[RMDB]
RNA sequence: GGGAACGACUCGAGUAGAGUCGAAAACGCAGCAUGCCGUGGAUAAGUUCCACAUCGUGCCCGCGGACGCGAUCAACGGUGGUGUACGGGGUGGCGUCGAUAAGCACGCUCAGCUGCUCAUCGUUUAGAAACUAGUGUAAUUCGUUACACUAGUUUCAAAAGAAACAACAACAACAAC
Reactivity to 2A3 in 0.01 (KOAc 150mM, MgCl2 10mM, bicine 150mM(pH8.5), 24C), signal-to-noise 9, nucleotides 027 to 126: c040g000c010a000g000c010a030u080g050c050c080g030u010g000g020a040u060a250a110g140u170u000c010c000a000c000a030u050c010g000u010g010c000c030c060g220c050g060g000a030c040g020c040g140a080u070c030a080a220c030g040g060u150g090g090u170g060u130a030c030g000g000g000g040u050g060g000c010g010u040c000g020a070u040a220a020g030c050a010c020g010c020u060c050a040g000c010u020g010c010u010c010a070u050c020g060u030u060u080a050
Reactivity to DMS in 0.01 (KOAc 150mM, MgCl2 10mM, bicine 150mM(pH8.5), 24C), signal-to-noise 9, nucleotides 027 to 126: c120g020c150a090g010c010a050u000g020c280c110g020u000g000g000a040u010a100a120g040u010u000c010c000a020c020a060u000c020g010u000g000c020c030c100g020c160g010g010a050c070g010c040g000a040u000c070a060a090c030g000g010u000g010g020u010g020u010a070c040g000g000g010g030u000g000g010c040g010u000c020g010a110u010a110a170g000c060a020c030g000c120u000c120a150g010c030u000g000c010u000c110a060u010c060g000u000u000u000a130